The record gives the reactivity of an RNA of 170 nucleotides to 2A3 and DMS.
Reactivities are given for positions 27 through 129.
Conditions: 150 mM KOAc, 10 mM MgCl2 and 150 mM bicine (pH 8.5), 24 C.
Values are in units of 0.01, from 0 to 300, in steps of 10.
For 2A3, 2,155 sequencing reads were counted.
RNA sequence: GGGAACGACUCGAGUAGAGUCGAAAAGAAGGACUCGGACGCGAACCCGUGAGUGGAAACCUCGUUCUUUAUUGGGGAGUACACUCGAGGAGUGGAAGGCGGGGAGGGCGGGGAGGAGUGUUACCCCAUAUCAGCUCCUUCGGGAGCUGAAAAAGAAACAACAACAACAAC
Reactivity to 2A3 in 0.01 (KOAc 150mM, MgCl2 10mM, bicine 150mM(pH8.5), 24C), signal-to-noise 2, nucleotides 027 to 129: g130a000a000g010g000a000c000u010c080g050g010a000c000g050c010g010a060a120c000c000c000g020u060g010a000g000u020g090g000a000a000a040c000c010u120c060g060u160u100c000u110u270u050a140u130u110g040g000g010g030a020g000u000a000c010a000c000u010c000g010a030g010g000a050g020u070g000g000a080a010g050g000c120g010g000g020g060a190g050g010g020c140g030g000g000g010a000g000g000a010g000u020g010u010u030a010c000c000c000c000a010u050a020
Reactivity to DMS in 0.01 (KOAc 150mM, MgCl2 10mM, bicine 150mM(pH8.5), 24C), signal-to-noise 2, nucleotides 027 to 129: g000a040a080g040g040a080c090u020c060g040g000a150c070g020c080g010a130a100c040c020c040g030u010g030a060g000u000g040g040a200a090a230c020c000u000c220g030u000u000c240u010u050u090a000u080u010g000g090g030g090a110g000u040a000c030a010c000u010c020g010a110g000g010a050g030u040g000g000a100a160g000g000c170g030g010g040g070a150g060g010g000c110g000g000g000g000a080g000g000a300g030u040g020u040u030a050c000c220c000c000a180u000a070